Structure probing data (DMS and 2A3) for a 177-nucleotide construct. For 2A3, 6,610 sequencing reads were counted. The DMS profile rests on 5,968 reads. For DMS the reverse transcriptase was MarathonRT. High DMS reactivity at an A or C suggests that its Watson-Crick edge is free.
[RMDB]
RNA sequence: GGGAACGACUCGAGUAGAGUCGAAAAGAUAUGGAGGUAAGACCACUACCCACCUGUAGUCUCCGAAGAACUAAUUCGGAAACGAAUUAGGGAGGAGAACUACAGAGGUGGUCUUACCUCCUAAGUCCCUAACGUAUAGGUUCGCCUAUACGUUAGGAAAAGAAACAACAACAACAAC
Reactivity to DMS in 0.01 (KOAc 150mM, MgCl2 10mM, bicine 150mM(pH8.5), 24C), signal-to-noise 5, nucleotides 027 to 126: g020a100u000a300u010g000g010a010g010g000u010a000a010g010a010c000c000a010c000u000a090c060c090c140a300c150c020u000g010u000a010g010u000c000u000c000c000g000a150a150g000a170a150c010u000a010a030u000u000c000g000g000a100a090a170c010g010a010a010u000u000a010g000g000g010a060g000g010a010g010a050a030c000u000a000c020a020g000a080g010g000u010g000g010u000c000u010u010a000c000c000u000c000c000u000a010a060g000u000c030
Reactivity to 2A3 in 0.01 (KOAc 150mM, MgCl2 10mM, bicine 150mM(pH8.5), 24C), signal-to-noise 1, nucleotides 027 to 126: g120a040u150a070u300g000g000a000g040g010u020a000a020g010a010c000c000a000c000u080a130c050c030c010a070c000c030u000g000u000a010g010u000c000u000c020c030g180a300a060g000a060a000c000u000a020a000u020u000c010g040g030a120a090a080c000g000a000a000u010u010a010g050g000g000a020g020g000a020g000a080a030c000u020a000c000a000g000a000g000g020u020g000g000u000c010u000u000a000c000c000u010c000c000u000a000a000g010u010c010